[RMDB]
RNA sequence: GGGAACGACUCGAGUAGAGUCGAAAAUUUGAAAACUGGCACAAGACAGGGAUGCCCUCUCUCACCACUCCUAUUCAACAUAGUGUUGGAAGUUCUGGCCAGGGCAAUUAGGCAGGAGAAGGAAAGAGUCAUAUAGUCAGUUCGCUGACUAUAUGACAAAAGAAACAACAACAACAAC
Reactivity to DMS in 0.01 (KOAc 150mM, MgCl2 10mM, bicine 150mM(pH8.5), 24C), signal-to-noise 2, nucleotides 027 to 126: u000u010u010g000a090a060a130a090c040u000g000g000c040a090c120a110a070g000a060c070a080g000g000g000a090u000g000c050c020c030u000c090u000c020u010c040a090c080c050a080c070u000c040c010u010a140u000u010c050a040a040c050a150u010a100g020u000g010u000u000g010g010a050a090g000u000u000c040u000g000g010c020c020a070g010g020g000c080a030a100u000u000a060g010g020c040a030g010g010a080g020a070a080g000g000a050a060a070g000a180
Reactivity to 2A3 in 0.01 (KOAc 150mM, MgCl2 10mM, bicine 150mM(pH8.5), 24C), signal-to-noise 2, nucleotides 027 to 126: u060u030u080g040a070a000a000a050c020u030g050g010c020a040c030a180a050g050a080c020a050g000g030g020a050u070g010c000c010c000u000c000u000c000u010c020a030c040c000a030c010u050c000c020u090a120u060u070c030a030a020c020a100u170a110g150u100g020u170u050g030g020a030a030g020u070u030c040u060g030g000c010c030a040g000g040g010c020a040a090u110u050a080g070g000c020a010g020g020a030g010a110a040g040g040a070a050a010g050a020

This 177-nucleotide RNA was probed chemically with DMS and 2A3. It was measured as part of the RMDB library OK2TRN. For 2A3, 3,047 sequencing reads were counted.